[RMDB]
RNA sequence: GGGAACGACUCGAGUAGAGUCGAAAAAUUGGAGGACCAGCACUCGAGAGCUGAACAAGCCUGCAUGGCCAUCCAUCAUAGUUACUAAAGAGAUUAGACUAACUCUCUGUAGCUCCAGAGGGCAAAAGAAGAACCACUUGGUAGAAUCCACCAGAGAGUCCCCAUAAAUGUUCGCAUUUAUGGGGACAAAAGAAACAACAACAACAAC
Reactivity to 2A3 in 0.01 (KOAc 150mM, MgCl2 10mM, bicine 150mM(pH8.5), 24C), signal-to-noise 1, nucleotides 027 to 156: a080u050u040g000g010a010g040g040a130c000c010a000g000c040a090c040u130c110g110a170g000a000g040c030u050g020a080a080c070a080a000g000c000c000u030g000c050a170u090g010g100c020c040a080u030c010c000a000u010c000a010u020a090g110u130u080a030c060u140a030a120a120g020a000g020a070u010u110a100g030a040c010u080a120a020c020u010c000u000c030u030g080u080a030g020c020u010c000c000a000g020a040g040g020g020c070a220a150a050a030g030a040a000g020a010a030c050c010a040c020u060u000g060g000u000a060g030a000a060u040c080c010a080c010c080a060g000a000g000a000
An RNA of 207 nucleotides, treated with 2A3 and read out base by base. For 2A3 the reverse transcriptase was SuperScript II with manganese. The RNA was probed in 150 mM KOAc, 10 mM MgCl2 and 150 mM bicine (pH 8.5) at 24 C.